This 177-nucleotide RNA was probed chemically with DMS and 2A3. For 2A3 the reverse transcriptase was SuperScript II with manganese. For DMS the reverse transcriptase was MarathonRT.

RNA sequence: GGGAACGACUCGAGUAGAGUCGAAAAAGUGACAGAUUAUGGAUUCGCACGAGAAGAAGAGAAAGUUCACAGAACUAGCACUUAAUCUUCUGUUUUUGCAGGAGAUCUAUUUGGCUGUUAUGUGUGAUAGUAAUCAACGAUUCGUCGUUGAUUACUAAAAAGAAACAACAACAACAAC
Reactivity to DMS in 0.01 (KOAc 150mM, MgCl2 10mM, bicine 150mM(pH8.5), 24C), signal-to-noise 9, nucleotides 027 to 126: a060g020u000g010a100c060a050g000a080u010u010a060u010g010g010a080u000u010c070g010c040a070c070g010a090g000a090a080g010a080a070g000a100g000a080a060a080g010u010u010c010a030c030a040g000a030a030c050u030a040g010c020a030c020u000u000a040a040u000c000u000u000c000u000g000u000u010u020u020u030g000c000a010g010g000a010g000a000u010c130u000a020u000u000u010g020g010c010u000g000u000u010a050u000g020u000g000u010g000a120
Reactivity to 2A3 in 0.01 (KOAc 150mM, MgCl2 10mM, bicine 150mM(pH8.5), 24C), signal-to-noise 9, nucleotides 027 to 126: a000g080u060g030a040c040a030g050a060u090u110a090u290g120g010a060u070u070c030g010c030a030c040g040a040g040a150a030g030a050a020g030a020g030a080a100a020g040u070u060c020a010c000a020g030a030a010c040u070a060g000c010a010c040u020u020a010a010u010c000u000u000c000u000g080u050u170u040u160u300g010c000a000g000g010a010g000a000u000c010u030a080u040u050u070g160g000c010u000g010u030u030a040u050g050u000g010u020g020a010